[RMDB]
RNA sequence: GGGAACGACUCGAGUAGAGUCGAAAAGAUAUGGAAGUGAACUACAGCCGUAGACUCUAUAAUCUCGGAAACGAGGUAGAGUUCAAGGCUGCACUUCCUAAGUCAAAGGUGAUGUUCGCAUCACCAAGGAAUUUAUGAAGUUCGCUUCAUAAAUUCCAAAAGAAACAACAACAACAAC
Reactivity to DMS in 0.01 (KOAc 150mM, MgCl2 10mM, bicine 150mM(pH8.5), 24C), signal-to-noise 4, nucleotides 027 to 126: g010a020u000a300u000g000g000a010a000g010u000g010a080a060c100u010a300c000a000g010c000c000g000u000a260g020a000c000u000c000u010a010u010a280a110u000c000u000c000g010g020a050a030a140c000g020a000g010g000u000a000g000a000g000u010u010c070a300a300g000g000c000u000g000c010a010c000u000u000c000c000u000a010a060g000u000c030a070a140a130g000g020u000g010a010u000g000u000u010c220g010c000a010u010c010a010c010c000a050a080
Reactivity to 2A3 in 0.01 (KOAc 150mM, MgCl2 10mM, bicine 150mM(pH8.5), 24C), signal-to-noise 5, nucleotides 027 to 126: g000a000u040a030u090g000g010a000a010g000u010g030a140a050c110u170a090c300a010g010c010c000g200u300a110g020a030c000u000c020u010a060u040a230a300u190c010u000c010g000g030a090a040a020c010g000a000g010g010u020a010g000a000g000u040u060c070a060a080g010g000c010u000g020c000a000c000u010u000c000c010u000a030a010g020u000c060a120a060a100g010g000u010g010a010u010g050u080u120c300g000c110a000u000c000a000c000c000a010a010